Structure probing data (2A3) for a 177-nucleotide construct. 2A3 is a SHAPE reagent: it acylates the 2'-hydroxyl of flexible nucleotides of all four kinds. For 2A3, 486 sequencing reads were counted.

RNA sequence: GGGAACGACUCGAGUAGAGUCGAAAAACUGGAUCAAGCACAAACAACAGUGAUGGUCAUAUUGAGAGAAGUCAAGAACAAACCACCAGAGAUCCACAUGAUGGCACUGAACGGAAUCUAGUCCUACGUGGGCGGUAGCAUUCGUGCUACCGCCCACAAAAGAAACAACAACAACAAC
Reactivity to 2A3 in 0.01 (KOAc 150mM, MgCl2 10mM, bicine 150mM(pH8.5), 24C), signal-to-noise 1, nucleotides 027 to 126: a000c000u000g120g000a030u090c140a200a000g000c090a000c000a010a300a120c070a170a000c090a090g000u000g070a190u090g000g000u000c020a000u010a110u090u220g000a170g000a010g020a100a000g120u100c000a080a000g060a030a010c120a180a050a000c000c000a010c000c000a010g010a020g000a050u090c050c000a000c010a000u200g040a090u000g000g000c000a000c040u040g000a040a000c020g020g050a010a000u070c080u060a080g030u050c060c000u040a030c070